[RMDB]
RNA sequence: GGGAACGACUCGAGUAGAGUCGAAAACUGGGUUCUAUGGGGCCCGGUGGAGAGACUGAUCGUAAUGCCCUUGGAGCAGGGAAGAAAAUAAUUUAGAAAGGAGAUUCCGCCCCAGCUUGCGGUGCGGUAAGGUACCGCAAUUCGUUGCGGUACCUUAAAAAGAAACAACAACAACAAC
Reactivity to 2A3 in 0.01 (KOAc 150mM, MgCl2 10mM, bicine 150mM(pH8.5), 24C), signal-to-noise 3, nucleotides 027 to 126: c000u000g020g000g020u040u010c040u050a270u280g050g000g000g030c010c010c010g000g020u020g010g020a050g000a020g010a040c000u060g040a050u090c020g040u080a030a050u140g010c010c010c000u030u090g070g000a000g010c010a010g070g000g050a060a040g120a060a120a050a050u270a080a090u090u070u080a090g010a040a110a030g040g030a070g050a080u170u000c000c000g000c000c010c020c000a020g100c090u100u120g050c040g040g030u030g020c000g000g010
Reactivity to DMS in 0.01 (KOAc 150mM, MgCl2 10mM, bicine 150mM(pH8.5), 24C), signal-to-noise 3, nucleotides 027 to 126: c020u000g000g000g030u000u000c010u010a100u040g030g000g010g000c010c030c030g020g000u010g000g020a120g000a160g010a100c020u010g000a060u010c050g000u010a080a100u020g000c020c030c040u010u000g000g000a040g020c080a040g010g000g010a120a080g000a140a080a080a080u060a080a060u000u010u020a110g010a050a080a100g010g010a070g000a140u010u000c000c000g020c050c020c020c000a130g010c130u010u030g020c100g010g000u000g010c020g000g000

Structure probing data (2A3 and DMS) for a 177-nucleotide construct. It was measured as part of the RMDB libraries RFM100 and RFMREP. For 2A3 the reverse transcriptase was SuperScript II with manganese. The reactions ran in a buffer of 150 mM KOAc, 10 mM MgCl2 and 150 mM bicine (pH 8.5), at 24 C. Reactivities are given for positions 27 through 126.